[RMDB]
RNA sequence: GGGAACGACUCGAGUAGAGUCGAAAACAUGACCAAUCACUUCUUAAAAGUCCCACUUCCCAAUACCAUCACAAUGGCAAUUAAAUUUCAGCAUGAGUUUUGGAGGAGACAAACAUUCAAGCCAUGAAAAAAUCCAAGGUGCAUCACUGGUCAUUGAAUCGCAUUUAGGAUUCGUCCUAAAUGCGAUAAAAGAAACAACAACAACAAC
Reactivity to DMS in 0.01 (KOAc 150mM, MgCl2 10mM, bicine 150mM(pH8.5), 24C), signal-to-noise 3, nucleotides 027 to 156: c010a070u000g010a120c040c030a090a090u010c050a070c010u020u010c030u010u000a050a100a110a090g010u010c010c000c010a090c040u000u000c010c000c020a180a260u010a020c040c040a050u000c170a130c190a080a100u000g010g010c020a040a070u000u000a040a030a100u000u000u010c020a110g020c060a100u000g020a100g040u000u000u000u000g020g010a080g040g020a130g010a130c040a080a080a070c050a110u010u000c030a090a100g050c000c000a090u000g000a010a020a070a090a130a080u000c040c020a020a100g000g030u000g020c020a070u000c040a040c040u000g020g010u000c030a140u000u020g000a080
Reactivity to 2A3 in 0.01 (KOAc 150mM, MgCl2 10mM, bicine 150mM(pH8.5), 24C), signal-to-noise 7, nucleotides 027 to 156: c040a040u060g030a020c020c020a020a040u080c030a030c060u130u090c050u160u220a090a120a030a120g060u050c010c010c010a050c040u020u030c010c000c000a040a050u090a100c020c020a020u090c050a030c030a130a130u050g050g010c030a000a030u110u110a150a100a140u100u160u120c040a030g020c020a030u060g030a040g130u070u080u090u090g080g000a080g010g040a050g010a020c050a020a100a020c040a030u080u090c010a040a010g010c010c020a030u060g000a050a050a040a010a010a010u070c040c020a040a030g040g000u020g000c010a010u030c010a010c070u020g000g020u010c010a030u010u110g100a060
The data come from the RNA Mapping Database (RMDB), library OK3TST. This 207-nucleotide RNA was probed chemically with DMS and 2A3. The DMS profile rests on 4,063 reads. High 2A3 reactivity points to a flexible backbone, as in loops and unpaired stretches. For 2A3, 4,816 sequencing reads were counted.